[RMDB]
RNA sequence: GGGAACGACUCGAGUAGAGUCGAAAACUGCCCUUUAUUUUCGCAUAAAUUCAGAUUUUGUGUGCCUUUUAUGUUCGUCUCUUAAUUGUACUGAUGUGGUGUUAUAUCUAAGGGCGGAUAAUUAACGCGAUAAGAUAAGAUUCGUCUUAUUUUAUCGAAAAGAAACAACAACAACAAC
Reactivity to DMS in 0.01 (KOAc 150mM, MgCl2 10mM, bicine 150mM(pH8.5), 24C), signal-to-noise 9, nucleotides 027 to 126: c090u010g000c020c010c010u000u020u020a040u010u000u010u020c040g020c020a040u010a030a050a050u020u020c200a100g020a150u020u010u010u010g010u010g000u000g010c090c060u000u010u010u020a050u020g010u000u000c040g000u010c010u030c020u000u000a030a060u010u010g010u010a040c050u010g010a110u020g010u030g010g010u000g010u020u010a030u020a020u010c100u010a030a030g000g000g010c000g000g000a020u010a020a080u020u020a040a090c300g010
Reactivity to 2A3 in 0.01 (KOAc 150mM, MgCl2 10mM, bicine 150mM(pH8.5), 24C), signal-to-noise 5, nucleotides 027 to 126: c020u050g010c010c000c000u010u090u030a080u010u050u020u060c010g000c000a010u010a020a060a040u110u040c040a030g040a110u010u010u050u020g060u000g000u010g020c010c020u090u080u010u060a080u080g010u000u020c010g020u000c020u000c000u020u040a020a010u060u030g010u020a020c000u030g150a140u080g030u070g040g040u030g020u030u030a110u010a010u010c040u010a000a010g000g010g000c010g000g000a020u020a020a020u100u040a050a010c050g000